Structure probing data (DMS and 2A3) for a 177-nucleotide construct.

RNA sequence: GGGAACGACUCGAGUAGAGUCGAAAAGAUAUGGAACCCGAGGUUCAACAGCCGUAUCUCGGAAACGAGAGUACGGACAUGAACCGAGGGUUCCUAAGUCAAAUCGGAUCAGUUCGCUGAUCCGAAACAUUAUUAUAGGCUUCGGCCUAUAAUAAUGAAAAGAAACAACAACAACAAC
Reactivity to DMS in 0.01 (KOAc 150mM, MgCl2 10mM, bicine 150mM(pH8.5), 24C), signal-to-noise 7, nucleotides 027 to 126: g000a040u000a300u000g000g000a010a000c000c000c000g010a300g000g000u010u000c000a070a080c200a230g010c000c000g000u000a020u000c000u000c000g000g000a080a070a110c000g000a020g000a060g010u010a000c010g000g000a020c070a190u000g000a010a010c000c000g000a300g000g000g010u000u000c000c000u000a000a080g000u000c040a080a120a140u000c010g000g010a020u000c000a000g010u000u010c190g020c000u010g000a010u000c000c000g000a010a040a090
Reactivity to 2A3 in 0.01 (KOAc 150mM, MgCl2 10mM, bicine 150mM(pH8.5), 24C), signal-to-noise 4, nucleotides 027 to 126: g000a010u030a010u070g000g010a000a010c000c010c010g020a050g010g010u040u040c080a190a050c040a300g050c000c000g020u010a010u010c000u010c000g000g040a060a020a010c010g000a000g000a020g090u040a000c010g000g030a020c020a100u240g000a010a010c000c000g000a000g000g000g000u000u000c000c000u000a000a010g000u000c010a000a000a170u050c000g000g010a000u000c000a000g050u090u120c250g070c130u010g000a000u010c010c000g000a000a000a000
The reactions ran in a buffer of 150 mM KOAc, 10 mM MgCl2 and 150 mM bicine (pH 8.5), at 24 C. Source: RMDB library TTRDEL, as collected in RNAgym. High DMS reactivity at an A or C suggests that its Watson-Crick edge is free.